[RMDB]
Notes: Chemical mapping of a 177-nucleotide RNA with DMS and 2A3. The RNA was probed in 150 mM KOAc, 10 mM MgCl2 and 150 mM bicine (pH 8.5) at 24 C. It was measured as part of the RMDB library OK2TRN. As a SHAPE reagent, 2A3 marks flexible, mostly unpaired nucleotides at the ribose 2'-OH.
RNA sequence: GGGAACGACUCGAGUAGAGUCGAAAAAGCGUACGGUACUACGUCACGCGGUACGAGUCAGACACGCUGGCCAGGAUCGCGCGCGCGGCCGACUCGUGAGUACUGAUCAGUAUAGGUACCACGGCCAACGUGCCUUGUCGUUCGCGACAAGGCACGUAAAAGAAACAACAACAACAAC
Reactivity to DMS in 0.01 (KOAc 150mM, MgCl2 10mM, bicine 150mM(pH8.5), 24C), signal-to-noise 1, nucleotides 027 to 126: a040g010c040g000u000a010c030g000g000u000a040c040u000a090c170g010u000c020a050c050g000c020g120g000u000a020c030g000a190g030u000c070a010g010a140c210a080c130g000c010u000g000g020c050c060a240g050g000a090u010c130g010c000g020c080g000c020g010c140g030g030c040c020g020a010c070u000c050g020u000g000a100g000u000a000c010u000g010a180u000c170a070g010u020a180u010a250g000g000u000a000c000c000a010c070g020g000c000c020a120
Reactivity to 2A3 in 0.01 (KOAc 150mM, MgCl2 10mM, bicine 150mM(pH8.5), 24C), signal-to-noise 1, nucleotides 027 to 126: a010g080c040g000u130a070c030g030g020u070a150c080u030a020c000g100u080c060a000c110g020c000g020g000u040a020c000g010a010g040u000c010a000g030a070c050a050c170g090c010u000g020g000c030c100a030g000g110a080u070c050g000c000g000c000g010c000g000c040g000g000c000c010g060a070c020u040c000g010u000g010a100g010u000a000c000u020g070a140u220c060a050g130u170a050u130a230g030g020u000a000c000c000a000c000g000g060c000c030a020